Structure probing data (DMS and 2A3) for a 207-nucleotide construct. The 2A3 profile rests on 2,072 reads. The RNA was probed in 150 mM KOAc, 10 mM MgCl2 and 150 mM bicine (pH 8.5) at 24 C. For DMS the reverse transcriptase was MarathonRT. 2A3 adducts were read by reverse transcription with SuperScript II with manganese.
RNA sequence: GGGAACGACUCGAGUAGAGUCGAAAACGACUUGACUGAAUUCAGGGUAUCGUCAAGAGAAAAGCCGGACGUCAUUGGGAAAAACAUCGAUGGAUCAGGCAUGUACUUGGAAGUCGUGUUCUCGGUGCGGCGCGCGCCCGGCUGCCCAGCGGCUCGAGAUUGUUAACUGGUUCGCCAGUUAACAAUCAAAAGAAACAACAACAACAAC
Reactivity to DMS in 0.01 (KOAc 150mM, MgCl2 10mM, bicine 150mM(pH8.5), 24C), signal-to-noise 1, nucleotides 027 to 156: c030g050a150c030u000u010g010a080c040u000g100a120a080u000u000c030a300g010g040g060u000a080u010c070g030u000c030a060a030g000a170g000a070a040a090a080g020c020c000g000g050a020c040g000u010c000a050u000u000g000g010g000a070a030a080a090a070c070a040u000c010g000a100u010g040g010a140u010c060a040g010g000c040a150u000g000u000a030c070u010u000g040g050a200a180g010u000c030g030u010g190u000u000c010u010c010g030g030u000g010c110g000g040c110g020c070g020c000g010c000c000c000g000g010c060u000g030c040c040c020a230g010c040g010g000c000u000c010g020a300
Reactivity to 2A3 in 0.01 (KOAc 150mM, MgCl2 10mM, bicine 150mM(pH8.5), 24C), signal-to-noise 3, nucleotides 027 to 156: c030g060a040c000u000u030g000a000c030u070g060a080a130u240u130c080a190g000g090g040u090a040u090c020g020u010c010a010a000g040a000g020a090a080a030a010g010c020c000g010g000a040c000g020u070c030a030u040u070g030g010g020a020a110a030a020a070c030a040u140c080g010a030u050g030g010a050u140c030a030g020g030c020a080u160g090u110a110c020u020u060g050g030a090a020g020u020c000g000u000g000u060u040c020u010c020g020g000u030g010c040g050g010c070g000c010g010c010g000c040c000c000g010g000c010u020g010c000c010c000a010g030c020g060g000c020u020c020g040a050